[RMDB]
RNA sequence: GGGAACGACUCGAGUAGAGUCGAAAAGUUAGCUGGAGCUAAGAAAUCAGCAGUGAUUAAGAAGAGACCAACAUCAUUGAGGUGAAAUCUGGGAAGUGUUUUCUGAGUGCACAAAGAAGUUGUGUUCAGAGAUAGCCAAGGUUGUACCUUGUGCUGACGCACUACUCCCAUUCGUGGGAGUAGUGCGAAAAGAAACAACAACAACAAC
Reactivity to 2A3 in 0.01 (KOAc 150mM, MgCl2 10mM, bicine 150mM(pH8.5), 24C), signal-to-noise 1, nucleotides 027 to 156: g010u060u080a000g000c020u000g030g000a050g070c020u070a080a000g070a030a130a030u170c020a040g020c000a000g010u040g020a050u160u120a120a020g030a090a030g000a010g000a000c010c010a040a090c000a050u120c020a010u000u160g070a030g050g000u040g070a080a090a000u140c170u110g030g050g010a030a010g030u010g000u020u040u020u170c000u040g050a040g010u150g000c080a000c010a090a110a050g140a110a020g040u120u000g000u000g000u120u120c000a040g010a000g000a100u150a040g030c000c000a000a000g000g000u040u060g060u300a230c000c000u000u040g040u150g000c000u000g060a010